[RMDB]
RNA sequence: GGGAACGACUCGAGUAGAGUCGAAAACCACCGGUCAAACCAUGGCGUAGGGCGAAUAACCGCAUCGCGGUUAUCCGCCGGCUGUGCAGGGCAGCGGCCCUUGCCCGGAUUUUGGGCAGCGUGCACCGCAACAUUUUAUGUUCGCAUAAAAUGUUGCAAAAGAAACAACAACAACAAC
Reactivity to DMS in 0.01 (KOAc 150mM, MgCl2 10mM, bicine 150mM(pH8.5), 24C), signal-to-noise 2, nucleotides 027 to 126: c020c010a150c160c060g010g000u000c050a040a100a170c200c030a030u000g000g030c010g020u020a130g020g000g010c000g010a010a000u000a000a000c010c000g030c010a100u000c260g000c000g010g010u000u000a000u000c010c010g020c000c000g000g020c020u000g010u010g000c140a050g000g020g030c030a140g010c100g000g010c030c020c020u010u000g010c050c010c010g010g000a170u000u000u010u030g000g010g000c020a060g010c080g010u010g030c070a050c090c110
Reactivity to 2A3 in 0.01 (KOAc 150mM, MgCl2 10mM, bicine 150mM(pH8.5), 24C), signal-to-noise 3, nucleotides 027 to 126: c000c010a020c010c050g040g070u050c040a070a020a130c070c010a060u060g040g020c040g070u070a150g110g070g000c020g000a010a000u000a000a000c000c010g030c140a190u180c260g000c000g000g000u000u000a000u030c000c010g020c020c000g000g000c010u000g020u030g000c020a060g020g020g000c040a090g170c120g280g000c020c000c040u050u040g000c020c010c030g040g080a140u190u130u220u260g000g000g010c040a030g080c040g100u070g010c010a050c070c070